[RMDB]
RNA sequence: GGGAACGACUCGAGUAGAGUCGAAAAGGAAACCCACCUCGUAAGAGGUAUCCGCAAGGAUGGGAACUCAGGGAACUGAAACAUCUCAGUACCUGAAGGAGAAGAAAGAGAAUUCGAUUCCGUUAGUAGCGGCGAGCGAACCCGGAUCAGCCCAAACCUAUUUGGAGAAGUUCGCUUCUCCAAAUAGAAAAGAAACAACAACAACAAC
Reactivity to 2A3 in 0.01 (KOAc 150mM, MgCl2 10mM, bicine 150mM(pH8.5), 24C), signal-to-noise 3, nucleotides 027 to 156: g060g000a040a030a040c000c000c000a010c000c000u020c000g070u100a120a090g000a010g000g010u010a050u020c010c000g040c080a080a020g020g010a010u020g000g000g020a050a020c030u000c010a010g050g010g030a110a060c000u010g000a030a150a060c100a300u120c030u000c060a000g020u020a020c000c000u020g020a040a020g030g040a070g010a040a030g040a030a090a010g110a010g030a030a140u110u060c050g000a010u220u040c010c010g000u000u010a010g000u010a000g000c010g120g030c220g070a030g010c010g000a010a010c000c010c020g040g000a010u010c010a010g030c000c010c020a040a050a050c020
Reactivity to DMS in 0.01 (KOAc 150mM, MgCl2 10mM, bicine 150mM(pH8.5), 24C), signal-to-noise 2, nucleotides 027 to 156: g000g030a070a100a230c020c010c060a070c020c000u000c000g000u010a150a120g000a000g020g000u000a010u000c010c020g020c150a060a110g000g010a040u000g020g010g010a070a170c090u010c000a070g000g000g020a240a140c010u020g020a010a120a140c220a140u000c090u020c000a050g000u010a150c030c010u000g010a030a120g010g020a140g000a070a060g010a130a050a160g000a090g000a080a130u000u000c010g020a120u000u000c000c000g000u000u000a170g020u000a300g010c000g000g030c120g010a100g000c030g000a050a090c060c080c020g020g030a130u000c030a090g000c000c000c040a010a150a190c200

An RNA of 207 nucleotides, treated with 2A3 and DMS and read out base by base.
2A3 is a SHAPE reagent: it acylates the 2'-hydroxyl of flexible nucleotides of all four kinds.
Conditions: 150 mM KOAc, 10 mM MgCl2 and 150 mM bicine (pH 8.5), 24 C.
The data come from the RNA Mapping Database (RMDB), library PDB130.